[RMDB]
RNA sequence: GGGAACGACUCGAGUAGAGUCGAAAAUGGAGUGCAGUUGCACGAUCUUGGCUCACUAUCUCAGAUGAUGCUCCAAAGACUAUUCUUAUACCUGUGGAUGAGAGUUUCUCUAGGUAACAUGCAGAGACACCUAGGUAAAUUUCGAUUUACCUAGGUGAAAAGAAACAACAACAACAAC
Reactivity to 2A3 in 0.01 (KOAc 150mM, MgCl2 10mM, bicine 150mM(pH8.5), 24C), signal-to-noise 8, nucleotides 027 to 126: u100g040g020a070g020u030g020c030a130g070u270u210g110c020a010c030g050a050u020c030u020u060g050g000c010u020c030a030c030u090a050u070c030u010c040a020g000a150u100g010a030u070g020c010u000c020c010a050a030a030g030a020c040u040a080u140u020c040u090u110a080u060a200c010c040u080g060u120g100g040a050u060g030a030g010a020g060u020u060u000c030u000c010u020a020g030g000u000a030a020c030a050u100g020c040a000g020a010g030a090
Reactivity to DMS in 0.01 (KOAc 150mM, MgCl2 10mM, bicine 150mM(pH8.5), 24C), signal-to-noise 9, nucleotides 027 to 126: u000g010g010a140g020u000g010c030a200g010u010u010g010c030a030c050g000a080u000c040u000u000g010g010c030u000c050a090c090u000a070u000c030u000c060a090g010a100u010g010a080u000g010c040u000c030c040a050a070a110g000a080c120u000a080u000u000c050u000u000a070u000a080c050c040u000g010u000g010g010a080u000g010a060g010a060g010u000u000u000c020u000c010u000a070g000g010u000a040a070c080a070u000g010c090a060g000a080g000a150